RNA sequence: GGGAACGACUCGAGUAGAGUCGAAAACGGCGGAGCCAUCCAGCGAAGGAAGCAUCUGGUCCGUUGCUAAUCCUUCGGAUGUAAUCAUUGGCGGCGCUUCUGCGCCCCGGGGCUGGUGAUGAAACAAAGAGAGAUGGAAAUUCGUUUCCAUCUCUCUAAAAGAAACAACAACAACAAC
Reactivity to 2A3 in 0.01 (KOAc 150mM, MgCl2 10mM, bicine 150mM(pH8.5), 24C), signal-to-noise 8, nucleotides 027 to 126: c020g030g010c020g040g020a010g030c020c020a030u030c020c020a020g070c020g030a030a020g030g000a020a020g010c010a010u020c030u150g090g060u050c050c050g000u020u000g000c000u050a090a080u030c000c000u010u000c010g030g020a060u060g050u130a090a080u100c060a080u050u110g030g000c060g010g000c000g020c000u220u100c070u190g000c000g000c000c000c000c010g020g010g030g000c030u020g000g070u040g010a060u050g030a030a070a070c090a050a170
Reactivity to DMS in 0.01 (KOAc 150mM, MgCl2 10mM, bicine 150mM(pH8.5), 24C), signal-to-noise 6, nucleotides 027 to 126: c100g020g010c030g000g000a120g000c120c010a080u010c030c020a130g000c060g000a050a030g020g000a050a080g010c020a010u000c030u020g020g020u020c100c070g010u000u010g000c020u010a070a100u010c020c000u010u000c010g010g010a070u010g010u010a090a090u030c060a080u020u010g000g010c090g010g000c020g000c030u020u030c170u030g020c040g020c020c010c040c020g000g010g010g000c030u000g000g000u000g010a070u010g000a100a060a070c140a100a120